[RMDB]
The data come from the RNA Mapping Database (RMDB), library RFM100. Chemical mapping of a 177-nucleotide RNA with 2A3.

RNA sequence: GGGAACGACUCGAGUAGAGUCGAAAACAUGCUUGUCUCUCGGGGCCACAAAACGAGUUCCUGGUAACUCAACUGAUAAUGCCCUGGGCGAAAGUCCCCGGGCCUAGGAUAGAAAGUAUCAAGGUGUCUCAUUCUGUCUGUUCGCAGACAGAAUGAGAAAAGAAACAACAACAACAAC
Reactivity to 2A3 in 0.01 (KOAc 150mM, MgCl2 10mM, bicine 150mM(pH8.5), 24C), signal-to-noise 3, nucleotides 027 to 126: c010a030u090g010c010u080u060g090u230c000u000c000u000c000g030g000g030g000c110c000a080c040a030a070a040a100c160g000a000g010u000u020c060c130u120g060g000u090a040a010c000u010c040a000a030c050u100g020a070u080a210a040u110g000c000c000c000u010g000g000g050c010g000a060a000a020g060u080c000c030c000c000g070g060g000c000c000u100a140g000g000a000u010a050g160a060a300a010g120u020a000u020c050a020a000g050g020u030g060u000
The 2A3 profile rests on 1,258 reads.